[RMDB]
RNA sequence: GGGAACGACUCGAGUAGAGUCGAAAAGAUAUGGAGUGAACUACAGCUUAAGUAGCGAAGAACUCGGAAACGAGGGAGCUACCAUAGCUGCACUCCUAAGUCAAACACCGAGGUUCGCCUCGGUGAACAUGAAUCAGAUGUUCGCAUCUGAUUCAUGAAAAGAAACAACAACAACAAC
Reactivity to DMS in 0.01 (KOAc 150mM, MgCl2 10mM, bicine 150mM(pH8.5), 24C), signal-to-noise 5, nucleotides 027 to 126: g000a030u000a300u000g000g000a030g020u000g000a070a030c100u010a300c010a010g000c010u000u000a270a090g010u000a000g000c000g000a100a110g020a100a150c010u000c000g010g000a090a080a180c000g000a010g000g000g010a090g020c000u000a010c000c040a110u000a010g010c000u000g010c010a010c010u000c000c000u000a010a080g000u000c020a100a140a250c020a000c000c000g000a010g010g010u000u010c210g010c000c000u000c000g000g010u000g000a010a130
Reactivity to 2A3 in 0.01 (KOAc 150mM, MgCl2 10mM, bicine 150mM(pH8.5), 24C), signal-to-noise 5, nucleotides 027 to 126: g030a010u060a050u170g020g000a000g010u010g030a100a060c110u190a080c300a000g000c010u060u020a200a040g000u010a000g010c020g140a300a030g020a090a050c010u000c000g000g020a070a080a030c010g000a010g000g000g040a020g000c010u010a000c000c020a040u090a070g000c000u000g000c000a000c000u000c000c000u010a120a000g040u000c030a040a110a020c010a010c010c000g010a000g020g010u100u170c300g120c080c000u000c000g000g000u000g000a000a010
Structure probing data (DMS and 2A3) for a 177-nucleotide construct. Source: RMDB library TTRDEL, as collected in RNAgym. The RNA was probed in 150 mM KOAc, 10 mM MgCl2 and 150 mM bicine (pH 8.5) at 24 C. The 2A3 profile rests on 14,515 reads.